[RMDB]
RNA sequence: GGGAACGACUCGAGUAGAGUCGAAAAAAGGCGGUUGCACUUUAUGCCGAGCAAGCCUCGCAGCAAGGGAUUAUACCCUUCUUGCUGGAUAUCAUUCCUGGCAGCGUCGUGGGUGCCUUUGCCAGUGCAUUUAAAGAGUGUUCGCACUCUUUAAAUGAAAAGAAACAACAACAACAAC
Reactivity to DMS in 0.01 (KOAc 150mM, MgCl2 10mM, bicine 150mM(pH8.5), 24C), signal-to-noise 9, nucleotides 027 to 126: a070a050g010g020c030g020g010u000u000g010c030a050c050u000u000u010a070u020g010c030c020g010a100g010c090a110a120g010c070c010u000c080g010c020a040g010c110a030a010g000g000g000a120u000u020a140u010a170c040c010c010u000u000c050u000u000g010c020u000g000g000a060u000a070u010c190a130u000u000c000c010u000g010g010c020a060g000c180g010u000c090g020u000g000g010g010u000g010c020c040u000u000u000g010c010c040a110g010u010g010
Reactivity to 2A3 in 0.01 (KOAc 150mM, MgCl2 10mM, bicine 150mM(pH8.5), 24C), signal-to-noise 8, nucleotides 027 to 126: a000a000g090g000c070g070g060u090u070g020c020a010c030u050u120u110a070u140g020c030c010g000a020g030c040a090a030g020c010c010u030c030g050c020a010g000c010a010a010g040g000g010a010u130u100a060u250a180c000c000c000u010u030c020u020u050g000c000u010g010g000a020u050a030u160c080a080u080u080c000c010u010g030g000c010a020g010c010g050u090c040g010u090g020g030g070u040g000c000c020u050u050u050g020c000c020a060g040u050g070